[RMDB]
RNA sequence: GGGAACGACUCGAGUAGAGUCGAAAAAGAUCGAUUAAGAUCGAUCAAUGAUGCCCCUCACCCACCUCUGAAGAUCCCAGGUGGGCGAGGGAACGGAGCACGGGAUCACGAGCAGUACGCUGCUCGAAAAAGAACUAGACCUUCGGGUCUAGUUCAAGUACCAUCUCACGUUCGCGUGAGAUGGUACAAAAGAAACAACAACAACAAC
Reactivity to 2A3 in 0.01 (KOAc 150mM, MgCl2 10mM, bicine 150mM(pH8.5), 24C), signal-to-noise 2, nucleotides 027 to 156: a000g000a000u000c000g000a000u060u100a160a170g070a200u030c000g000a000u000c000a000a080u260g080a010u180g130c040c010c000c000u000c000a010c000c000c000a000c010c000u060c030u060g100a170a060g010a040u020c000c000c000a000g000g000u030g000g000g000c000g000a000g010g010g010a000a040c070g100g070a010g130c070a150c170g020g000g010a020u030c000a010c030g010a000g000c030a000g020u050a020c200g020c120u000g000c000u030c000g010a000a000a000a000a000g000a000a000c000u000a000g000a000c000c040u040u110c250g070g000g000u020c000u000a020g000u000u000c000a010a000